[RMDB]
RNA sequence: GGGAACGACUCGAGUAGAGUCGAAAAUUGGGGUCACUGUGUAAAGGUACUACAGAGCUACGACCAUGUGAUAGGCGGGGAGCUGGACCCUCUCACCACCUAGGUAGUGUUGAAGGUCGCGAGGGAGUCAAGGACGCCCGGCAUCAGAGGAUUGCACCAUAUGCAAUCCGUUCGCGGAUUGCAUAUGAAAAGAAACAACAACAACAAC
Reactivity to DMS in 0.01 (KOAc 150mM, MgCl2 10mM, bicine 150mM(pH8.5), 24C), signal-to-noise 2, nucleotides 027 to 156: u000u000g010g010g060g030u000c050a100c080u020g080u000g010u000a070a110a110g010g020u000a100c040u000a120c040a110g010a110g040c010u000a060c020g020a120c020c020a130u000g000u010g010a140u000a100g020g010c030g000g000g010g010a070g010c050u020g030g010a080c010c010c020u000c010u010c010a050c000c040a050c020c020u010a110g040g020u000a080g030u000g010u040u010g010a100a040g020g020u000c090g010c080g000a180g030g030g010a060g030u000c010a050a150g010g010a110c030g000c010c010c010g000g030c030a090u000c030a140g010a060g020g000a130u000u010g010c030a140c090
Reactivity to 2A3 in 0.01 (KOAc 150mM, MgCl2 10mM, bicine 150mM(pH8.5), 24C), signal-to-noise 4, nucleotides 027 to 156: u110u050g000g030g000g000u020c020a040c070u030g010u010g020u070a050a090a110g080g020u070a080c010u020a030c050a020g070a030g050c040u050a030c070g070a070c030c020a020u150g040u040g100a090u060a150g040g000c030g010g030g000g000a070g030c030u040g010g050a020c000c020c000u000c000u000c010a040c050c000a010c000c040u040a080g160g030u070a040g040u060g060u130u110g080a100a040g000g010u020c030g000c020g050a040g020g000g000a060g040u060c070a090a050g070g020a060c040g040c000c020c000g040g030c010a020u050c020a020g060a030g030g060a060u010u130g010c040a030c020
Source: RMDB library VIROID, as collected in RNAgym. Structure probing data (DMS and 2A3) for a 207-nucleotide construct. For DMS, 4,939 sequencing reads were counted. For 2A3, 2,849 sequencing reads were counted.